[RMDB]
RNA sequence: GGGAACGACUCGAGUAGAGUCGAAAAAUCAUUGCUUACUCCCCAGUCUGCAGAGUGUCUUAGAGCAAGUAAGUCUGAAGUAUUGAGUGAAUCUUCUGAAUUGCUUCAGCAAGAGUUAGAAGAGCUAUCUCAUAGAGGCAUUCGUGCCUCUAUGAGAAAAAGAAACAACAACAACAAC
Reactivity to DMS in 0.01 (KOAc 150mM, MgCl2 10mM, bicine 150mM(pH8.5), 24C), signal-to-noise 2, nucleotides 027 to 126: a070u010c070a090u010u000g030c030u000u000a100c080u000c030c000c000c040a130g000u010c060u000g030c080a080g010a100g020u010g000u010c040u000u010a110g010a070g010c040a040a090g010u000a020a050g010u010c040u000g000a040a030g020u010a040u000u000g010a080g010u010g010a100a140u010c040u010u010c010u000g000a040a050u000u030g000c020u000u000c110a080g010c070a070a090g000a100g000u000u010a030g000a060a070g010a150g000c090u000a120